[RMDB]
RNA sequence: GGGAACGACUCGAGUAGAGUCGAAAAAUUAUUAAAGAAAAUAUUCAAGCUGCUUUAGAGUACGGUGCAGUAGAUACAGUGAUUGAUGCUAUAGAUACGAUUGUUACAUCUAAAGAUAAUCAAACGAAUGAAAUAGUCUGUUCGCAGACUAUUUCAUAAAAGAAACAACAACAACAAC
Reactivity to DMS in 0.01 (KOAc 150mM, MgCl2 10mM, bicine 150mM(pH8.5), 24C), signal-to-noise 2, nucleotides 027 to 126: a050u060u050a070u010u030a080a020a230g000a110a040a110a090u000a020u040u010c040a030a110g010c130u020g030c000u000u000u000a080g010a060g030u010a050c040g000g030u010g000c010a000g050u020a000g000a100u030a040c050a050g010u000g000a140u000u020g000a100u010g000c000u000a090u010a010g000a170u000a020c010g010a050u020u010g000u070u010a050c020a040u010c020u000a020a010a000g020a080u000a060a060u030c150a060a080a080c160g000a060
Reactivity to 2A3 in 0.01 (KOAc 150mM, MgCl2 10mM, bicine 150mM(pH8.5), 24C), signal-to-noise 2, nucleotides 027 to 126: a000u180u160a060u190u140a210a050a020g040a000a150a010a030u220a100u070u260c030a130a030g050c050u040g000c000u110u080u030a020g000a000g050u030a050c020g000g000u030g020c020a040g050u030a010g000a060u050a020c020a010g040u020g050a140u160u140g020a070u300g040c020u000a010u010a040g010a010u020a060c010g030a040u010u010g010u160u030a020c050a080u020c010u040a060a020a010g060a070u060a130a040u180c080a000a130a110c060g060a070
Structure probing data (DMS and 2A3) for a 177-nucleotide construct.
Values are in units of 0.01, from 0 to 300, in steps of 10.
Source: RMDB library OK1LIB, as collected in RNAgym.